[RMDB]
RNA sequence: GGGAACGACUCGAGUAGAGUCGAAAAUUAGCCCAGACUUAUGAGAGAGUAAGACCUCUCAGCCCCUCCACCUUGGAGUGCCCUAUUCGGAGCACUGCAGUUCCCGAUAGAAAGGCUAAGCACCUCGCUUAGUCAUAUUGUUCGCAAUAUGACUAAGAAAAGAAACAACAACAACAAC
Reactivity to 2A3 in 0.01 (KOAc 150mM, MgCl2 10mM, bicine 150mM(pH8.5), 24C), signal-to-noise 5, nucleotides 027 to 126: u060u020a010g020c000c000c010a050g080a090c090u190u170a090u210g000a000g000a000g000a000g040u040a100a020g060a120c010c000u000c000u010c010a050g070c000c000c000c010u000c000c000a040c010c000u010u030g010g040a010g000u010g000c000c000c010u150a260u100u220c120g010g020a080g040c010a010c000u050g030c010a010g000u020u000c000c000c030g010a010u020a050g100a050a100a000g030g000c020u010a020a020g070c010a070c010c010u040c020g030
Reactivity to DMS in 0.01 (KOAc 150mM, MgCl2 10mM, bicine 150mM(pH8.5), 24C), signal-to-noise 6, nucleotides 027 to 126: u000u000a090g020c000c010c020a150g020a190c180u010u000a050u010g000a010g010a030g000a050g010u010a110a150g000a290c230c000u010c010u010c010a050g000c040c010c010c000u000c010c030a100c190c140u000u000g020g000a020g020u000g000c000c010c000u000a170u000u010c210g000g000a070g010c010a010c020u000g000c020a070g000u000u000c000c000c000g010a140u020a070g000a070a160a090g000g010c010u000a030a060g010c080a150c050c020u000c140g010
The record gives the reactivity of an RNA of 177 nucleotides to 2A3 and DMS. Reactivities are given for positions 27 through 126. Conditions: 150 mM KOAc, 10 mM MgCl2 and 150 mM bicine (pH 8.5), 24 C. The 2A3 profile rests on 8,444 reads. For 2A3 the reverse transcriptase was SuperScript II with manganese.